[RMDB]
RNA sequence: GGGAACGACUCGAGUAGAGUCGAAAAGAUAUGGAUCCCGAAGAGCGAGGAUCUGCUGAUCGGAAACGAUCAGGCAGGGAGCUUUAGGGAUCCUAAGUCAAAAGGAUCCCACUUCGGUGGGAUCCAAUCGAUUGUUAAAGUUCGCUUUAACAAUCGAAAAAGAAACAACAACAACAAC
Reactivity to DMS in 0.01 (KOAc 150mM, MgCl2 10mM, bicine 150mM(pH8.5), 24C), signal-to-noise 3, nucleotides 027 to 126: g010a020u000a030u010g010g000a000u010c000c000c000g000a200a180g000a010g040c000g000a060g010g000a010u010c000u000g000c000u000g020a010u000c010g020g010a030a010a030c000g020a000u000c000a090g010g020c000a010g000g000g000a010g030c000u000u000u010a300g000g010g000a000u000c000c000u000a000a070g000u000c030a090a100a120a200g010g010a010u010c000c000c010a030c010u000u000c210g030g010u000g000g000g000a000u000c000c010a020a030
Reactivity to 2A3 in 0.01 (KOAc 150mM, MgCl2 10mM, bicine 150mM(pH8.5), 24C), signal-to-noise 2, nucleotides 027 to 126: g010a000u010a020u040g000g000a000u010c000c010c030g000a090a030g010a010g020c010g040a300g100g000a010u000c000u000g000c000u010g000a000u000c020g020g000a000a000a010c000g000a000u010c020a000g040g000c010a000g010g020g010a020g020c000u160u160u180a080g000g010g000a000u000c000c000u000a010a000g000u000c000a000a030a020a220g010g000a000u000c000c040c010a020c020u070u110c300g190g000u000g010g000g000a000u010c000c000a000a010